[RMDB]
RNA sequence: GGGAACGACUCGAGUAGAGUCGAAAAGCAAGCUAGCCGGCAAAAAAGCAAACUUGACCACCAAGGAUAAAAGAGAUCUUAUACAAGGAUGCAAAAGAUAAUCUCACUUUUGACACCCACUGAUCUCAAAACGUGCGGUUCUUCGGAACCGCACGAAGAGACUACAAGUGUUCGCACUUGUAGUCUCAAAAGAAACAACAACAACAAC
Reactivity to 2A3 in 0.01 (KOAc 150mM, MgCl2 10mM, bicine 150mM(pH8.5), 24C), signal-to-noise 1, nucleotides 027 to 156: g030c020a010a010g010c020u110a000g000c020c040g090g010c110a040a070a060a080a000a000g000c030a070a060a060c020u040u070g060a090c000c020a030c030c010a070a050g110g060a100u060a130a140a060a030g000a000g000a010u020c030u000u120a100u070a120c080a030a090g000g000a030u020g000c020a000a020a000a000g000a030u150a140a190u120c040u110c100a100c050u000u000u000u040g130a120c000a000c000c000c000a030c030u010g000a020u010c010u000c020a000a140a000a000c000g000u000g010c030g000g100u000u000c020u070u070c050g040g020a000a000c000c000g090c010a000c000g000a000a000
This 207-nucleotide RNA was probed chemically with 2A3. For 2A3, 633 sequencing reads were counted. It was measured as part of the RMDB library M2RFPK. Conditions: 150 mM KOAc, 10 mM MgCl2 and 150 mM bicine (pH 8.5), 24 C.